Source information
The record gives the reactivity of an RNA of 207 nucleotides to DMS and 2A3. The RNA was probed in 150 mM KOAc, 10 mM MgCl2 and 150 mM bicine (pH 8.5) at 24 C. The DMS profile rests on 2,175 reads. For 2A3, 1,420 sequencing reads were counted. For DMS the reverse transcriptase was MarathonRT.
RNA sequence: GGGAACGACUCGAGUAGAGUCGAAAAUACCGCAGGCCUGCGGUGCGGCAGUGUCGAGACCUGCCGUAAGCCGUGUUGUUUUGACAACCGGGAGAAAGCGUAUGCGGAGGCAGCGCUUUCAGGGUCUAAAAGUAUGGGAUCUUCGGAUCCCAUACAAGAUAACUGAUCUCUUCGGAGAUCAGUUAUCAAAAGAAACAACAACAACAAC
Reactivity to DMS in 0.01 (KOAc 150mM, MgCl2 10mM, bicine 150mM(pH8.5), 24C), signal-to-noise 1, nucleotides 027 to 156: u010a100c020c040g000c040a130g030g040c030c000u000g010c020g030g030u010g010c080g000g030c060a040g040u020g030u000c080g030a240g000a130c100c000u010g030c010c030g050u010a000a000g050c010c010g000u010g040u000u010g030u000u000u000u000g020a050c000a020a020c030c030g000g000g000a190g030a020a010a010g010c000g020u010a120u000g010c030g040g030a300g020g030c010a160g010c000g000c000u000u000u010c000a050g000g010g010u000c010u020a080a130a110a230g010u000a020u000g000g000g010a000u020c010u010u000c300g040g000a020u010c010c000c010a000u000a000c020a010a040
Reactivity to 2A3 in 0.01 (KOAc 150mM, MgCl2 10mM, bicine 150mM(pH8.5), 24C), signal-to-noise 2, nucleotides 027 to 156: u120a000c010c000g040c010a000g000g020c000c030u030g000c020g010g020u010g000c000g000g000c020a020g030u050g040u300c100g030a060g090a160c020c000u000g010c000c000g000u000a020a010g040c000c000g130u110g000u110u000g000u010u140u150u300g120a010c000a010a010c000c000g000g010g000a000g020a000a000a000g000c000g000u050a300u160g020c060g020g160a050g300g000c000a000g000c000g000c040u000u000u000c000a000g020g000g000u000c010u010a000a000a000a170g000u000a000u000g000g000g000a000u000c000u050u070c210g090g000a000u000c010c000c000a000u000a000c000a000a010